[RMDB]
RNA sequence: GGGAACGACUCGAGUAGAGUCGAAAAGAAGGCUAUUAGCCUUCCUGAUGAGUCCAUUCCAAGGACGAAACCGUCUCUCCUGACUCCCAGUUUCCGUAGGUUAAUUAUCCUCACGGAUUACUUCUGGCAGACAAACACUGUUCGCAGUGUUUGUCUGAAAAGAAACAACAACAACAAC
Reactivity to 2A3 in 0.01 (KOAc 150mM, MgCl2 10mM, bicine 150mM(pH8.5), 24C), signal-to-noise 2, nucleotides 027 to 126: g030a010a000g020g000c020u070a120u300u300a230g000c010c000u010u030c000c000u060g050a050u060g030a010g020u000c000c010a030u200u060c080c040a110a140g040g000a030c020g030a070a010a000c040c020g050u030c020u000c020u050c000c020u020g050a070c010u020c010c030c010a010g000u000u060u000c000c000g020u000a010g000g000u030u080a150a090u300u130a120u100c000c010u050c020a000c000g000g020a010u000u090a060c070u030u060c010u030g060g100
Reactivity to DMS in 0.01 (KOAc 150mM, MgCl2 10mM, bicine 150mM(pH8.5), 24C), signal-to-noise 2, nucleotides 027 to 126: g000a040a010g020g040c000u010a170u000u000a050g050c000c000u010u000c000c030u000g000a090u010g010a270g010u000c010c020a220u010u010c120c150a170a120g020g010a060c000g010a040a090a090c080c020g000u000c020u000c050u000c030c020u000g010a150c110u000c030c000c060a070g000u000u000u000c000c000g020u000a040g000g030u000u000a070a110u060u010a070u010c010c000u000c140a030c030g000g000a010u000u000a030c030u000u010c060u000g030g000
This 177-nucleotide RNA was probed chemically with 2A3 and DMS. For 2A3 the reverse transcriptase was SuperScript II with manganese. The DMS profile rests on 1,223 reads. The 2A3 profile rests on 1,587 reads. It was measured as part of the RMDB library VIROID. The RNA was probed in 150 mM KOAc, 10 mM MgCl2 and 150 mM bicine (pH 8.5) at 24 C.